[RMDB]
RNA sequence: GGGAACGACUCGAGUAGAGUCGAAAAGUGACUGUUCGCAGUCACAAAAAACCUUUGUGCUCAAUGUUGUCAGCGAUUCACGUCCCAUUGGGACGUUAUUUCGCUUGGAUUUACAUUACGCGAGCACUCUGGUAAAAAAGUAUGAUUCGUCAUACAACUCUGAGACUCGUUUCGACGAGUCUCAGAGAAAAGAAACAACAACAACAAC
Reactivity to 2A3 in 0.01 (KOAc 150mM, MgCl2 10mM, bicine 150mM(pH8.5), 24C), signal-to-noise 1, nucleotides 027 to 156: g000u000g000a000c000u000g020u100u110c230g110c180a100g000u100c000a000c120a000a020a020a000a000a000c000c000u000u000u000g000u010g010c000u030c000a010a010u050g000u000u040g010u070c000a000g000c000g000a030u000u040c060a020c020g000u030c010c100c170a300u220u290g020g000g010a000c000g000u000u000a020u010u190u020c000g000c000u020u070g060g000a020u110u150u290a020c000a000u020u000a060c300g090c060g160a000g000c000a000c000u000c000u000g000g050u140a160a080a000a000a000a210g020u020a000u010g000a060u080u090c230g090u000c090a000u000a000c000a030a090